[RMDB]
RNA sequence: GGGAACGACUCGAGUAGAGUCGAAAAGGAGAGCACUUGCCUUGCAAGCAAGGGGUCAGGAGUUCGACUCUCCUCAUCUCCACCAUUUAAGAGUAUAUUACUUAAAUCUUUGAUUUACUUAGUAGCCUCUUACAAUGCACUUAUAGCUUAAAUUUAACGACUAGUCGUAGUUCGCUACGACUAGUCGAAAAGAAACAACAACAACAAC
Reactivity to 2A3 in 0.01 (KOAc 150mM, MgCl2 10mM, bicine 150mM(pH8.5), 24C), signal-to-noise 2, nucleotides 027 to 156: g050g020a040g000a020g030c020a020c120u000u040g030c020c000u040u070g030c010a030a000g030c010a010a020g000g020g030g070u110c060a030g020g060a050g000u020u070c070g050a020c020u000c010u040c010c000u030c020a030u000c010u010c010c020a090c000c010a010u010u030u030a000a000g000a000g000u000a000u000a000u050u000a000c000u000u010a000a000a040u000c120u090u130u300g000a000u020u000u000a030c010u010u000a010g000u010a000g040c000c010u000c010u000u010a020c050a060a030u030g020c090a040c090u270u080a120u130a250g020c020u040u110a090a030a130u260u200u120a100a040
The record gives the reactivity of an RNA of 207 nucleotides to 2A3. For 2A3, 863 sequencing reads were counted. The RNA was probed in 150 mM KOAc, 10 mM MgCl2 and 150 mM bicine (pH 8.5) at 24 C. Values cover nucleotides 27 to 156.